[RMDB]
RNA sequence: GGGAACGACUCGAGUAGAGUCGAAAAAUGAAAGGAAGUAAAGCGCCCUUGGAAGAAGGCCAGGCAGGAGACCUGAGAGAUCAAGUGCGCAGUUUGACCUUUGACUUAGGGUCUUCCACGCUGGAGGGUGCUACCACUCAUUCGUGAGUGGUAGCACAAAAGAAACAACAACAACAAC
Reactivity to DMS in 0.01 (KOAc 150mM, MgCl2 10mM, bicine 150mM(pH8.5), 24C), signal-to-noise 2, nucleotides 027 to 126: a060u020g020a140a080a060g000g000a050a110g030u030a040a140a160g000c130g020c060c030c000u000u000g000g030a130a090g010a080a050g000g000c000c000a060g010g030c060a100g030g000a080g000a030c000c000u000g000a140g010a080g010a080u000c000a030a020g010u010g010c090g050c110a120g000u000u010u000g020a070c010c020u000u000u000g000a050c030u020u000a300g000g010g000u020c010u010u000c000c030a120c160g000c020u000g000g010a170g020g000
Reactivity to 2A3 in 0.01 (KOAc 150mM, MgCl2 10mM, bicine 150mM(pH8.5), 24C), signal-to-noise 1, nucleotides 027 to 126: a000u190g050a050a000a020g030g050a020a070g050u150a120a060a090g070c030g030c010c000c010u000u040g100g030a080a030g030a040a010g050g000c030c030a020g020g030c010a010g040g140a030g020a010c000c000u110g030a180g000a010g020a300u010c010a050a000g050u080g060c080g010c090a080g060u100u160u180g090a160c000c000u050u050u100g040a040c010u020u050a000g000g000g000u000c000u010u000c010c010a030c070g050c020u050g000g070a050g050g030
The record gives the reactivity of an RNA of 177 nucleotides to DMS and 2A3. 2A3 adducts were read by reverse transcription with SuperScript II with manganese. DMS adducts were read by reverse transcription with MarathonRT. For 2A3, 1,077 sequencing reads were counted.